An RNA of 177 nucleotides, treated with 2A3 and DMS and read out base by base. 2A3 adducts were read by reverse transcription with SuperScript II with manganese. Source: RMDB library TTRDEL, as collected in RNAgym. High 2A3 reactivity points to a flexible backbone, as in loops and unpaired stretches. Conditions: 150 mM KOAc, 10 mM MgCl2 and 150 mM bicine (pH 8.5), 24 C.
RNA sequence: GGGAACGACUCGAGUAGAGUCGAAAAGAUAUGGACUACUCAGCUUUUGACGCUCUUAUCGGAAACGAUAAACGUGAGCGAUAAGCUGGUAGUCCUAAGUCAAAACACGUGGGUUCGCCCACGUGAACGAUUACGGUAACUUCGGUUACCGUAAUCGAAAAGAAACAACAACAACAAC
Reactivity to 2A3 in 0.01 (KOAc 150mM, MgCl2 10mM, bicine 150mM(pH8.5), 24C), signal-to-noise 5, nucleotides 027 to 126: g000a000u010a020u050g000g000a000c010u010a010c080u110c300a010g010c030u100u190u300u300g180a080c000g000c000u000c000u010u000a000u010c000g000g000a010a010a000c000g000a000u010a030a090a030c280g210u070g030a020g010c010g200a250u130a300a000g000c000u010g000g000u010a000g000u000c000c000u000a000a000g000u020c000a000a010a060a060c010a000c010g010u000g010g010g020u080u110c270g200c020c000c000a000c000g020u000g020a000a010
Reactivity to DMS in 0.01 (KOAc 150mM, MgCl2 10mM, bicine 150mM(pH8.5), 24C), signal-to-noise 3, nucleotides 027 to 126: g010a020u000a110u020g000g000a000c000u000a010c010u020c020a010g010c010u000u000u020u010g030a210c030g010c010u000c010u000u000a000u010c000g000g000a010a030a060c000g000a000u000a000a020a150c300g000u000g020a000g020c000g020a080u000a000a040g000c010u000g010g000u010a000g000u000c010c000u000a000a030g000u000c010a100a060a140a220c010a010c000g030u000g020g000g010u000u000c240g010c000c000c000a010c000g010u000g010a040a110